[RMDB]
RNA sequence: GGGAACGACUCGAGUAGAGUCGAAAACAAGCAUUGUGAUUCCAACAUAACGGCGAUUAAACCAGUCAAUCUGCCACACUGCGAGCGUGCUCAAAACAUACAUACUGAGAACAUGUGUCAGUAAGUCGCUCAUGGGUCACGUGGGACGAUUGUCCAGUCAUUCCUAAAAGUUCGCUUUUAGGAAUGAAAAAGAAACAACAACAACAAC
Reactivity to 2A3 in 0.01 (KOAc 150mM, MgCl2 10mM, bicine 150mM(pH8.5), 24C), signal-to-noise 9, nucleotides 027 to 156: c050a040a030g080c050a090u170u200g020u020g030a050u300u190c030c020a050a060c030a150u160a130a050c090g040g000c020g010a020u070u150a090a090a130c060c030a020g090u090c040a030a050u010c040u140g010c030c010a040c010a010c040u090g030c050g040a020g010c020g050u160g020c010u040c070a060a110a100a050c050a040u220a040c010a020u100a050c050u090g040a030g050a190a030c040a140u110g050u030g050u070c000a010g020u060a080a010g020u020c000g000c010u010c020a040u090g020g000g010u040c040a020c070g010u030g020g010g000a030c050g110a190u100u220g010u030c010c020a010g040
Reactivity to DMS in 0.01 (KOAc 150mM, MgCl2 10mM, bicine 150mM(pH8.5), 24C), signal-to-noise 4, nucleotides 027 to 156: c030a100a180g010c060a120u000u030g020u010g000a080u000u000c040c030a100a140c090a120u000a060a100c060g020g030c020g010a130u000u000a050a130a190c070c030a100g020u000c040a070a120u010c020u000g040c040c010a060c010a030c070u000g030c030g000a060g060c010g030u000g020c010u000c110a080a090a100a120c070a090u000a050c040a110u000a220c090u010g010a160g020a080a100c060a060u010g030u010g000u010c030a080g000u000a070a060g020u010c020g020c010u010c050a100u010g010g030g000u020c040a040c060g010u020g020g000g010a080c050g010a130u000u020g010u000c010c040a170g010